[RMDB]
RNA sequence: GGGAACGACUCGAGUAGAGUCGAAAAUGGCUGCUGGUUGGGAGAGUAAGUGCCAUCACUAAUUUAAAAGUCCUUGCCAUCUGGAAUCAGGCUUUGUCAACAGCAGCUGAGAAAAGCAGCCUGUGCCUCUUACGGGCUAAUUCGUUAGCCCGUAAGAAAAAGAAACAACAACAACAAC
Reactivity to DMS in 0.01 (KOAc 150mM, MgCl2 10mM, bicine 150mM(pH8.5), 24C), signal-to-noise 2, nucleotides 027 to 126: u010g030g010c000u000g000c000u000g010g070u000u000g000g010g000a100g010a070g020u000a110a070g010u010g030c080c060a050u010c050a060c070u000a040a080u010u000u020a060a050a050a110g010u010c010c010u010u000g000c030c020a050u000c080u010g000g000a120a140u010c090a050g000g000c010u000u010u000g010u010c060a040a050c080a040g000c020a040g020c010u020g000a110g000a070a040a100a070g000c090a050g010c030c020u010g010u010g010c090c070
Reactivity to 2A3 in 0.01 (KOAc 150mM, MgCl2 10mM, bicine 150mM(pH8.5), 24C), signal-to-noise 1, nucleotides 027 to 126: u080g000g010c000u000g020c020u030g160g090u090u030g020g020g000a050g010a020g020u010a070a070g040u050g100c100c010a010u160c010a030c000u110a090a180u110u060u300a090a110a060a000g040u000c000c000u020u020g070c020c000a040u100c070u070g120g000a060a090u080c000a020g030g000c040u090u150u060g300u050c030a110a030c000a040g000c030a000g090c040u030g030a010g050a030a040a010a000g000c010a000g020c060c020u050g040u030g050c000c010